[RMDB]
RNA sequence: GGGAACGACUCGAGUAGAGUCGAAAAACGGUCGUACGCGACCGAGGCGCGGCUAGGUCGACGGACCGAACAAUGGCAACCCGCAUUCUGCCAUCCGCCGCGCAGCUUCUUCUCAAACGGUGCGGAAAAAAGUAGGACACCUUCGGGUGUCCUACAAGGUAUAAGAACUGUUCGCAGUUCUUAUACCAAAAGAAACAACAACAACAAC
Reactivity to DMS in 0.01 (KOAc 150mM, MgCl2 10mM, bicine 150mM(pH8.5), 24C), signal-to-noise 1, nucleotides 027 to 156: a100c040g000g040u000c030g000u000a140c170g010c040g010a010c010c010g010a050g020g050c000g040c020g000g000c010u000a060g020g040u010c000g040a130c300g050g010a040c010c010g000a130a070c290a150a040u010g020g000c000a050a090c020c010c040g020c010a060u000u000c150u000g010c000c000a030u000c020c060g000c010c000g040c010g020c000a020g000c070u010u000c040u000u000c060u010c000a120a110a120c150g000g000u000g020c020g020g010a000a060a080a100a130a090g000u000a000g000g010a030c000a010c000c000u000u000c160g110g030g040u000g050u010c000c000u000a000c040a010a040
Reactivity to 2A3 in 0.01 (KOAc 150mM, MgCl2 10mM, bicine 150mM(pH8.5), 24C), signal-to-noise 2, nucleotides 027 to 156: a000c020g000g000u000c000g030u050a040c240g000c020g140a000c000c010g000a030g000g010c000g000c000g000g000c000u010a010g000g000u000c020g090a170c170g160g020a000c010c000g000a000a000c010a000a010u000g000g000c000a010a030c030c010c000g000c000a020u300u080c000u060g000c000c000a010u000c010c020g000c000c000g000c000g000c000a000g000c010u140u090c010u060u030c020u010c020a060a070a030c050g040g000u010g000c000g000g000a110a020a060a000a000a020g000u000a000g000g000a000c000a000c010c000u030u070c210g050g000g000u000g000u000c000c000u000a000c000a000a000